[RMDB]
RNA sequence: GGGAACGACUCGAGUAGAGUCGAAAAGUAUGCUUCGGCAUACGCCAAUCCUAAGUCGUUAGCACUGCAAGGGAGCUCGAUAAGGUUCGGAAACGAACCUUUUGACGAGCGAAGAACUUGCAGCUAACGAUAUGGACCUCUAGCACUUCGGUGCUAAAUCACAUCAUACGUUCGCGUAUGAUGUGAUAAAAGAAACAACAACAACAAC
Reactivity to 2A3 in 0.01 (KOAc 150mM, MgCl2 10mM, bicine 150mM(pH8.5), 24C), signal-to-noise 4, nucleotides 027 to 156: g000u010a000u020g010c030u060u130c300g120g000c000a000u000a000c010g010c000c030a070a100u020c000c010u060a130a060g020u010c000g010u000u000a010g000c110a060c240u020g000c010a010a000g010g020g010a030g000c010u000c000g030a040u020a050a010g010g000u000u010c010g020g050a090a080a040c010g000a000a010c000c000u010u000u000u030g040a010c000g010a000g000c000g030a090a000g020a010a010c000u000u000g000c000a000g000c000u000a000a000c000g000a000u000a020u020g000g000a020c000c050u150c120u070a000g000c000a010c020u070u080c280g110g000u000g000c000u040a130a120
Reactivity to DMS in 0.01 (KOAc 150mM, MgCl2 10mM, bicine 150mM(pH8.5), 24C), signal-to-noise 1, nucleotides 027 to 156: g000u010a000u000g030c010u000u030c300g100g000c000a030u000a010c000g020c030c050a080a140u000c000c000u000a090a300g030u000c000g040u000u000a020g000c040a120c060u000g060c030a010a040g000g030g000a300g000c000u000c010g000a140u010a000a020g020g080u020u000c000g000g000a120a070a240c020g000a000a010c020c000u000u000u000u010g000a150c200g000a030g020c010g000a100a160g010a100a080c000u010u000g000c000a090g000c000u000a000a010c000g020a030u030a120u000g000g000a050c070c020u000c020u010a030g000c010a010c000u000u020c300g070g000u000g040c000u000a000a130